[RMDB]
RNA sequence: GGGAACGACUCGAGUAGAGUCGAAAAGGUUUAAUCGGGUCUACACCUCUCCAUACCGAUUAAACCAGCGAAAGCGACAACAAGGAGAGGAUAGGAGUGCAUGCGUCAUAACCUCCCCAUAGCAUGCACUCCAGCGAGAGCGAACAACAGGGGAGGAGAUAUCGGCGAUAUUCGUAUCGCCGAUAUCAAAAGAAACAACAACAACAAC
Reactivity to 2A3 in 0.01 (KOAc 150mM, MgCl2 10mM, bicine 150mM(pH8.5), 24C), signal-to-noise 2, nucleotides 027 to 156: g010g010u000u010u000a000a020u000c000g010g000g060u040c030u060a030c090a140c060c000u000c000u000c010c000a040u040a120c000c000g000a010u000u000a000a000a010c000c000a010g030c020g030a080a030a030g080c060g150a110c070a140a010c030a120a040g000g000a020g010a010g010g000a000u080a070g000g020a000g000u000g000c000a000u010g000c000g100u160c100a100u070a210a190c000c000u000c000c010c000c010a010u060a030g050c000a000u000g000c010a000c000u000c000c000a000g000c030g000a090g000a010g010c000g010a040a020c010a010a010c020a140g000g000g010g000a000g000g000a000